[RMDB]
RNA sequence: GGGAACGACUCGAGUAGAGUCGAAAACCAACCAACCGGUUGGUUAACCUUCCGGUUGGUUGGAAGGAAUUAAUUGGUUCCUUAACCUUAAGGUUCCGGAACCGGUUGGAACCUUGGUUCCAAGGCCCUAACGCUUCAAGUUCGCUUGAAGCGUUAGAAAAGAAACAACAACAACAAC
Reactivity to 2A3 in 0.01 (KOAc 150mM, MgCl2 10mM, bicine 150mM(pH8.5), 24C), signal-to-noise 1, nucleotides 027 to 126: c000c000a000a010c020c000a000a010c010c010g000g020u000u010g010g020u010u050a040a300c000c000u000u000c010c000g000g030u000u000g000g000u000u010g000g020a020a010g020g030a050a050u050u040a080a050u110u190g010g040u020u020c020c000u000u040a010a010c010c000u060u280a240a140g000g010u010u000c090c030g050g050a030a020c030c030g030g000u050u050g020g000a000a000c000c000u000u080g070g000u040u000c010c000a030a070g120g060c010c000
Reactivity to DMS in 0.01 (KOAc 150mM, MgCl2 10mM, bicine 150mM(pH8.5), 24C), signal-to-noise 2, nucleotides 027 to 126: c020c000a000a020c010c000a000a020c010c010g000g000u000u000g000g000u000u000a040a100c020c000u010u000c010c000g000g020u000u010g000g020u000u000g010g020a030a000g010g000a060a110u010u000a020a060u000u000g000g010u000u010c000c000u000u000a020a020c000c040u010u020a150a140g010g020u010u000c110c120g000g000a020a030c030c030g000g000u000u000g000g000a080a140c000c010u000u000g020g010u000u000c030c020a110a080g000g010c110c080